[RMDB]
RNA sequence: GGGAACGACUCGAGUAGAGUCGAAAAUGUGGAAUAAGAAGAUAUCUCACCCCAUUACUUUGGGGGCUCUUUGUGGGUCCCAUGCCUUGUUUGUCAUUGAACCCAAAGGAAUUGGCACAGAGUGAACCACAGUGAAUGAUAGAAUAAAUCAAUGAAAUAAUGCUAAUGCAUUCGUGCAUUAGCAUUAAAAAGAAACAACAACAACAAC
Reactivity to 2A3 in 0.01 (KOAc 150mM, MgCl2 10mM, bicine 150mM(pH8.5), 24C), signal-to-noise 1, nucleotides 027 to 156: u090g010u070g020g080a100a000u210a150a130g060a080a030g060a110u090a110u080c080u020c030a050c020c000c000c000a050u090u040a110c080u040u080u110g030g000g000g000g000c010u000c000u010u080u180g110u150g070g020g000u040c000c000c000a000u000g000c000c000u200u110g060u160u150u120g060u100c010a020u010u010g050a040a040c030c000c000a070a110a000g020g000a050a060u070u090g010g000c090a020c000a090g010a000g020u000g040a030a030c000c000a000c010a050g050u030g030a020a140u170g130a020u090a090g140a260a010u110a090a030a060u220c040a020a000u110g050a160a000a000
Reactivity to DMS in 0.01 (KOAc 150mM, MgCl2 10mM, bicine 150mM(pH8.5), 24C), signal-to-noise 2, nucleotides 027 to 156: u010g010u020g000g010a110a160u000a090a150g040a130a090g000a190u000a090u000c060u000c040a170c030c000c010c020a150u010u000a100c180u000u000u000g000g020g000g020g030c040u010c000u020u010u010g000u000g010g010g010u010c020c030c010a070u000g020c070c060u000u000g030u000u000u000g030u000c010a190u000u010g000a040a150c080c000c030a050a120a070g040g000a100a100u010u000g040g010c010a200c040a140g000a080g020u000g000a040a030c010c020a040c050a150g030u010g010a040a070u000g020a060u030a110g040a050a090u010a000a060a080u000c050a010a050u000g010a100a090a190